[RMDB]
Annotation
Chemical mapping of a 177-nucleotide RNA with 2A3 and DMS.
RNA sequence: GGGAACGACUCGAGUAGAGUCGAAAAGAUAUGGAUCCCUGACGCAGCAUCGAUCUCGGAAACGAGGGAGCUGGUCACAUGGGAUCCUAAGUCAAAAGACUGAUGACACUUCGGUGUCAUCAGUCAACUCAUCCUCUUACUUCGGUAAGAGGAUGAGAAAAGAAACAACAACAACAAC
Reactivity to 2A3 in 0.01 (KOAc 150mM, MgCl2 10mM, bicine 150mM(pH8.5), 24C), signal-to-noise 2, nucleotides 027 to 126: g030a030u090a060u140g010g010a010u010c010c110c030u040g030a030c100g210c300a020g000c000a130u300c060g090a090u020c000u020c010g010g030a090a110a100c020g010a020g030g010g010a010g020c010u000g020g000u000c000a020c050a160u160g000g000g000a000u000c000c000u010a110a040g020u000c030a000a010a060a180g000a010c010u020g000a000u020g000a000c000a000c030u070u150c300g100g000u000g010u010c000a000u000c010a010g020u010c010a000a020
Reactivity to DMS in 0.01 (KOAc 150mM, MgCl2 10mM, bicine 150mM(pH8.5), 24C), signal-to-noise 3, nucleotides 027 to 126: g020a020u010a300u000g000g000a020u010c000c000c000u010g020a050c050g020c000a020g050c010a250u020c220g010a040u010c010u000c000g000g000a070a120a200c000g000a000g010g010g000a010g070c020u000g000g000u010c000a070c260a070u000g000g030g000a000u000c000c000u000a000a060g000u000c040a110a060a080a140g010a000c010u000g000a020u000g000a010c000a020c010u000u000c200g000g010u010g000u000c000a010u000c000a010g010u000c000a030a130